Conditions: 150 mM KOAc, 10 mM MgCl2 and 150 mM bicine (pH 8.5), 24 C. Chemical mapping of a 177-nucleotide RNA with DMS and 2A3.

RNA sequence: GGGAACGACUCGAGUAGAGUCGAAAAUAAUGUUCUUCAGAAUAUUUUUAAGCUUUGUUAUGCCACAGUUUACAUGUUACAAUUAAACAUUCUUCACGUGAGAAUUGUUUACAAAUUGUCUCUAAACCCUGAAAAUAACUUUCGAGUUAUUUUCAGGAAAAGAAACAACAACAACAAC
Reactivity to DMS in 0.01 (KOAc 150mM, MgCl2 10mM, bicine 150mM(pH8.5), 24C), signal-to-noise 3, nucleotides 027 to 126: u010a050a050u010g010u020u000c000u010u030c210a160g020a090a040u010a030u010u010u030u020u010a050a170g010c020u000u000u010g010u010u010a060u000g010c040c050a060c120a060g000u000u010u010a060c190a050u010g000u000u010a030c090a040a060u000u000a020a040a010c000a010u010u000c000u000u000c030a130c240g040u040g000a030g010a010a010u010u020g020u000u000u000a040c280a080a040a050u000u010g010u000c030u000c030u000a040a040a130c230
Reactivity to 2A3 in 0.01 (KOAc 150mM, MgCl2 10mM, bicine 150mM(pH8.5), 24C), signal-to-noise 5, nucleotides 027 to 126: u140a020a050u070g010u030u010c030u140u080c030a080g090a180a070u040a080u100u120u040u050u100a100a080g000c040u140u090u110g040u130u110a070u160g020c040c020a060c030a090g010u040u090u110a120c090a090u090g050u100u100a040c030a040a070u090u010a020a000a010c010a020u030u000c000u020u030c070a150c300g120u220g050a000g020a010a030u080u090g000u000u000u030a000c010a000a080a030u010u030g010u000c000u000c000u030a030a050a040c010